Chemical mapping of a 177-nucleotide RNA with 2A3 and DMS. The reactions ran in a buffer of 150 mM KOAc, 10 mM MgCl2 and 150 mM bicine (pH 8.5), at 24 C. The DMS profile rests on 5,546 reads. Values are in units of 0.01, from 0 to 300, in steps of 10.
[RMDB]
RNA sequence: GGGAACGACUCGAGUAGAGUCGAAAAGAUAUGGAGUAUAUACAUCUUUGAUCGUGAGCAUCGGAAACGAUGCCACGGGAGAUGUAUACUCCUAAGUCAAAGGAUCUUCACUUCGGUGAAGAUCCAAGUAAAGCUGUAGGUUCGCCUACAGCUUUACAAAAGAAACAACAACAACAAC
Reactivity to 2A3 in 0.01 (KOAc 150mM, MgCl2 10mM, bicine 150mM(pH8.5), 24C), signal-to-noise 3, nucleotides 027 to 126: g010a010u010a010u080g000g000a000g030u020a030u010a010u010a150c040a030u010c020u300u300u170g060a090u080c020g000u000g010a140g000c000a010u000c000g000g000a030a000a000c000g000a010u010g000c020c000a000c000g010g010g000a050g000a000u000g010u010a000u000a010c000u000c020c000u000a030a000g020u020c040a080a090a190g000g000a010u000c000u000u010c000a010c000u060u150c300g130g000u000g000a000a000g000a000u000c000c000a000a000
Reactivity to DMS in 0.01 (KOAc 150mM, MgCl2 10mM, bicine 150mM(pH8.5), 24C), signal-to-noise 3, nucleotides 027 to 126: g010a030u000a130u020g000g000a030g000u010a030u000a060u010a120c080a020u000c000u000u000u020g010a030u010c010g020u000g000a240g010c010a000u000c010g010g000a020a020a070c000g010a010u000g010c000c010a000c000g010g010g010a000g010a010u000g000u000a000u000a000c000u000c000c000u000a000a080g000u000c010a110a130a210g010g000a010u000c000u000u000c000a010c000u000u020c220g030g020u000g000a000a000g000a000u000c000c010a000a040